[RMDB]
RNA sequence: GGGAACGACUCGAGUAGAGUCGAAAAUUAAUGAAGCAAAUCUCCAAACGCCAACGAUGAGCGUUUCGCAAUCGCCGCUUAAGGCUUUUGCCGAGGCUGCUUGAGCCUUGUUACCAAAGAAAAGCCGAAAACCCAAAUGUCUUCGGACAUUUGGGAACAAUGGAGUUAAGUUCGCUUAACUCCAUUGAAAAGAAACAACAACAACAAC
Reactivity to 2A3 in 0.01 (KOAc 150mM, MgCl2 10mM, bicine 150mM(pH8.5), 24C), signal-to-noise 5, nucleotides 027 to 156: u140u070a030a080u150g090a070a020g030c070a100a090a100u070c080u030c060c050a050a040a030c010g000c010c010a090a060c150g170a230u150g040a080g030c020g000u010u060u060c030g000c010a010a030u010c020g000c020c010g100c180u250u220a100a050g000g000c000u000u020u010u000g000c010c010g000a000g000g000c050u090g010c000u040u040g020a010g000c000c000u000u020g050u110u120a050c020c010a010a010a030g020a010a060a020a010g030c020c010g060a050a050a030a040c000c000c000a000a000a000u000g000u000c000u030u070c160g060g000a000c000a000u000u000u000g000g010g000a000a000
Reactivity to DMS in 0.01 (KOAc 150mM, MgCl2 10mM, bicine 150mM(pH8.5), 24C), signal-to-noise 2, nucleotides 027 to 156: u000u000a040a090u000g020a140a090g000c040a040a070a090u000c020u000c020c020a090a110a050c020g040c020c010a100a060c040g020a100u000g010a100g040c020g000u000u010u000c040g050c010a170a050u010c050g000c030c010g010c130u010u000a050a130g000g000c010u010u020u000u000g020c010c030g010a110g040g040c000u010g050c070u010u000g010a070g020c030c020u000u010g010u000u010a190c070c040a090a120a190g000a080a100a040a060g020c030c030g020a070a040a040a110c000c000c020a000a020a000u000g020u000c000u000u000c300g090g010a020c010a020u000u000u010g000g000g020a000a010